[RMDB]
RNA sequence: GGGAACGACUCGAGUAGAGUCGAAAACGGCUGUAUCGCUGGCGCCGGCAGCGGAAUCCGUACCGUCAGCAUCUGCGACCGAGGCGAAAGCGACCAACCUGAAGGACGCCAUUUCGAAGGUACGCCAACAUACAGCUCGUUUCGACGAGCUGUAUGUAAAAGAAACAACAACAACAAC
Reactivity to 2A3 in 0.01 (KOAc 150mM, MgCl2 10mM, bicine 150mM(pH8.5), 24C), signal-to-noise 2, nucleotides 027 to 126: c040g080g000c040u080g050u110a050u120c090g010c010u030g000g040c010g000c040c090g030g000c050a040g120c040g100g050a120a070u120c040c000g060u060a060c000c000g020u040c000a020g000c020a100u070c050u170g040c020g080a060c040c020g060a080g020g060c090g040a060a030a020g050c000g000a040c020c000a060a100c020c070u130g060a160a020g060g030a020c010g000c010c050a190u060u040u060c050g030a060a000g000g000u040a120c040g010c040c000a030
Reactivity to DMS in 0.01 (KOAc 150mM, MgCl2 10mM, bicine 150mM(pH8.5), 24C), signal-to-noise 2, nucleotides 027 to 126: c080g020g010c040u000g030u050a050u000c070g000c030u000g000g000c020g030c050c040g000g030c230a100g030c070g020g000a100a140u010c060c010g000u000a040c160c020g040u000c050a060g020c040a130u000c080u010g020c020g050a100c030c010g000a160g010g010c060g030a040a070a090g000c010g000a090c010c030a140a090c090c110u000g010a100a150g010g000a100c130g000c020c060a090u000u000u000c060g030a160a160g010g010u010a070c060g000c030c110a140

Background:
The data come from the RNA Mapping Database (RMDB), library OK2TRN. An RNA of 177 nucleotides, treated with 2A3 and DMS and read out base by base. For 2A3 the reverse transcriptase was SuperScript II with manganese. The DMS profile rests on 1,351 reads. The reactions ran in a buffer of 150 mM KOAc, 10 mM MgCl2 and 150 mM bicine (pH 8.5), at 24 C.